The record gives the reactivity of an RNA of 170 nucleotides to DMS and 2A3. As a SHAPE reagent, 2A3 marks flexible, mostly unpaired nucleotides at the ribose 2'-OH. For 2A3, 5,666 sequencing reads were counted. Values are in units of 0.01, from 0 to 300, in steps of 10. The reactions ran in a buffer of 150 mM KOAc, 10 mM MgCl2 and 150 mM bicine (pH 8.5), at 24 C. DMS adducts were read by reverse transcription with MarathonRT. It was measured as part of the RMDB library 15KLIB.
RNA sequence: GGGAACGACUCGAGUAGAGUCGAAAAUGGGGAGAAAAGGGAGGAUCGGAUGGGAAGAGUAUAUCCUACGGGAAUCCGCGAUCCCCUCUCACGUCCAACCCAUCCCCGGUCCGAGUGAAGGGGGACUAUAGUACGUGCUUCGGCACGUACAAAAGAAACAACAACAACAAC
Reactivity to DMS in 0.01 (KOAc 150mM, MgCl2 10mM, bicine 150mM(pH8.5), 24C), signal-to-noise 3, nucleotides 027 to 129: u000g020g000g010g020a080g030a100a080a070a050g060g050g010a140g000g010a030u030c000g030g000a130u040g010g000g050a100a050g020a080g000u000a070u040a100u030c110c010u030a130c130g000g040g030a040a020u020c110c100g050c060g070a000u020c010c030c000c030u030c050u010c090a120c120g040u010c000c000a090a140c030c010c010a000u030c030c010c030c030g040g000u000c040c040g030a120g030u060g050a120a070g050g010g000g040g040a110c030u080a000u000a090
Reactivity to 2A3 in 0.01 (KOAc 150mM, MgCl2 10mM, bicine 150mM(pH8.5), 24C), signal-to-noise 3, nucleotides 027 to 129: u130g000g000g000g000a040g070a000a060a030a060g050g030g020a060g000g040a050u080c030g020g010a030u060g050g000g000a090a000g030a030g090u070a070u060a020u070c010c000u030a060c080g060g000g030a020a040u050c010c020g030c010g080a060u000c000c000c010c000u010c000u000c000a100c060g050u000c010c000a050a060c000c010c000a020u040c000c010c000c000g040g020u000c020c000g050a040g000u160g020a050a020g010g010g000g040g000a000c000u030a020u050a080